[RMDB]
RNA sequence: GGGAACGACUCGAGUAGAGUCGAAAAGCAAUACUGGCGGUAUGCGCCAUGUUGCGCUUCAUGGCCAUGCGUCCAUCAACGCUACUAAAACAACGCUGGCACCGCAUUGACCGCAAGGAGGGAAGUAUACGCCGUAUUUAUUCGUAAAUACGGCGUAAAAAGAAACAACAACAACAAC
Reactivity to DMS in 0.01 (KOAc 150mM, MgCl2 10mM, bicine 150mM(pH8.5), 24C), signal-to-noise 5, nucleotides 027 to 126: g000c010a040a130u000a040c220u000g000g010c010g010g000u010a090u010g010c060g040c060c000a010u010g010u000u000g030c230g000c070u000u010c060a100u000g010g000c010c020a050u030g010c020g010u000c000c030a090u000c110a060a070c060g000c050u000a210c200u000a040a080a100a090c140a050a070c070g010c020u000g000g020c050a070c070c020g020c050a030u000u010g000a070c020c040g000c110a050a090g000g020a080g000g000g000a060a060g020u010a130
Reactivity to 2A3 in 0.01 (KOAc 150mM, MgCl2 10mM, bicine 150mM(pH8.5), 24C), signal-to-noise 3, nucleotides 027 to 126: g000c010a020a030u010a080c160u040g010g010c040g000g080u240a140u240g270c040g000c000c000a020u070g010u000u010g040c020g010c030u070u060c040a120u090g020g000c010c010a020u080g040c020g050u000c020c010a080u100c060a080a040c050g010c040u090a100c050u090a110a110a040a100c060a040a010c050g010c030u010g030g000c030a040c010c020g030c040a020u020u120g100a110c010c000g000c060a060a040g030g000a030g010g020g030a060a010g070u070a080